[RMDB]
RNA sequence: GGGAACGACUCGAGUAGAGUCGAAAAGCAAAACCUUCGGGUUUUGCGAAUUUCCUAAGUCUUUGCUAUGAAGUGAGAGCGGUAAUACUAUCGGAAACGAUAGUGCCAGCUCUAUGGAGCAAAGAUAUGGAUCUAAGCAAUCUAUUCGUAGAUUGAAGAACUUAUAGUGGUUCGCCACUAUAAGUUCAAAAGAAACAACAACAACAAC
Reactivity to DMS in 0.01 (KOAc 150mM, MgCl2 10mM, bicine 150mM(pH8.5), 24C), signal-to-noise 2, nucleotides 027 to 156: g010c000a000a000a010a000c000c000u000u010c300g040g050g030u000u000u000u000g010c000g000a020a000u020u000u000c000c000u020a090a200g010u000c000u000u000u000g020c010u010a120u000g000a150a230g030u000g000a050g010a020g050c000g000g000u000a050a160u000a130c020u020a010u010c000g030g010a240a110a300c010g040a020u010a000g030u000g010c050c020a140g040c000u000c010u010a040u010g040g000a030g000c000a000a040a040g010a010u000a100u010g010g000a210u000c070u000a090a240g020c030a050a010u000c010u000a060u000u010c290g030u000a020g000a040u010u010g030a150a150
Reactivity to 2A3 in 0.01 (KOAc 150mM, MgCl2 10mM, bicine 150mM(pH8.5), 24C), signal-to-noise 3, nucleotides 027 to 156: g000c010a000a000a010a020c000c010u030u090c240g020g000g010u000u000u000u000g000c000g000a000a010u040u040u000c000c000u030a190a030g010u000c000u040u000u010g010c010u050a130u300g110a160a090g120u170g140a020g010a000g030c030g000g000u060a200a090u070a280c000u000a000u010c010g090g040a130a050a060c010g010a000u000a000g000u000g010c000c000a030g000c000u000c000u000a020u030g030g050a010g000c000a000a000a000g000a000u020a030u080g040g010a040u050c050u190a060a030g110c000a000a000u020c000u030a010u000u180c230g110u070a020g020a030u060u080g040a090a080